[RMDB]
RNA sequence: GGGAACGACUCGAGUAGAGUCGAAAAGAUAUGGACCAUGCACAGCAACAGCUAUUGUUCGGAAACGAACACGGUAGACAUGCUGGAUAUGGUCCUAAGUCAAAACUUAUGGGUUCGCCCAUAAGAACCUCAUAGACUGCUUCGGCAGUCUAUGAGGAAAAGAAACAACAACAACAAC
Reactivity to DMS in 0.01 (KOAc 150mM, MgCl2 10mM, bicine 150mM(pH8.5), 24C), signal-to-noise 1, nucleotides 027 to 126: g000a000u000a240u000g010g020a010c010c000a010u000g000c300a080c000a000g000c000a000a050c250a170g000c000u000a010u010u000g060u000u000c010g010g000a060a060a140c040g000a000a000c020a020c300g030g060u010a000g000a050c070a240u000g020c020u000g070g010a160u020a000u000g000g000u000c040c030u000a000a020g000u000c010a070a070a140a200c020u010u000a000u000g010g000g010u020u080c260g000c040c000c020a000u000a010a000g000a170a160
Reactivity to 2A3 in 0.01 (KOAc 150mM, MgCl2 10mM, bicine 150mM(pH8.5), 24C), signal-to-noise 2, nucleotides 027 to 126: g020a010u030a030u050g000g000a010c020c010a020u050g050c150a110c030a250g000c000a050a300c010a200g000c000u000a010u170u060g000u040u020c010g020g020a020a040a040c000g030a000a020c020a000c020g130g000u040a000g040a060c130a300u300g070c010u010g000g050a140u090a000u110g020g000u000c000c000u000a000a000g010u010c040a010a000a080a210c000u010u010a000u020g010g000g020u070u110c300g090c080c010c000a010u010a000a020g010a020a080